The data come from the RNA Mapping Database (RMDB), library ARCHII. This 207-nucleotide RNA was probed chemically with DMS and 2A3. The DMS profile rests on 3,338 reads. Reactivities are given for positions 27 through 156. In probing experiments dimethyl sulfate is read out at A N1 and C N3, which are open when not base-paired. For 2A3, 1,948 sequencing reads were counted.
[RMDB]
RNA sequence: GGGAACGACUCGAGUAGAGUCGAAAAGAGGGAUGAAGCGUAAGAUAUAAUUCAGGUUAGCUAUUCAUUCGCGUGUCGGUUCGCAGGUGGUAGUGAAAUUAAAGAUCGACUAAGCAUGUAGUACCAAUGAUGAAUGGUUUUCGGACGGGGGUUCAAAACCUGUCUUUUACUUCGGUAAAAGACAGGUAAAAGAAACAACAACAACAAC
Reactivity to DMS in 0.01 (KOAc 150mM, MgCl2 10mM, bicine 150mM(pH8.5), 24C), signal-to-noise 2, nucleotides 027 to 156: g020a060g020g000g040a150u000g040a070a060g040c040g030u010a170a100g030a220u000a090u000a080a150u000u000c100a100g010g030u000u000a120g020c020u000a040u000u010c000a060u000u000c080g020c050g030u000g040u000c010g010g000u000u000c050g060c060a080g010g030u000g000g040u010a090g050u000g010a070a090a000u000u000a050a140a080g000a120u000c030g000a050c050u010a070a120g020c000a080u000g020u000a090g040u000a080c020c010a070a130u000g000a080u000g000a040a050u000g010g000u000u000u000u010c020g000g010a030c040g000g010g000g020g000u000u000c030a040a140a080
Reactivity to 2A3 in 0.01 (KOAc 150mM, MgCl2 10mM, bicine 150mM(pH8.5), 24C), signal-to-noise 3, nucleotides 027 to 156: g030a010g000g020g010a040u040g020a060a010g030c030g040u080a100a050g050a070u080a030u040a180a130u130u080c040a010g100g010u070u070a010g010c020u060a070u130u110c050a060u080u090c040g000c030g050u080g020u030c030g000g040u040u040c020g010c030a030g070g060u030g000g000u050a020g010u020g090a040a030a010u110u100a130a080a010g050a040u060c060g020a020c030u050a050a060g030c030a060u080g010u090a060g050u010a040c020c010a060a050u080g010a010u030g010a060a060u040g010g000u000u070u070u160c010g000g010a010c010g000g000g000g020g000u000u060c030a030a040a000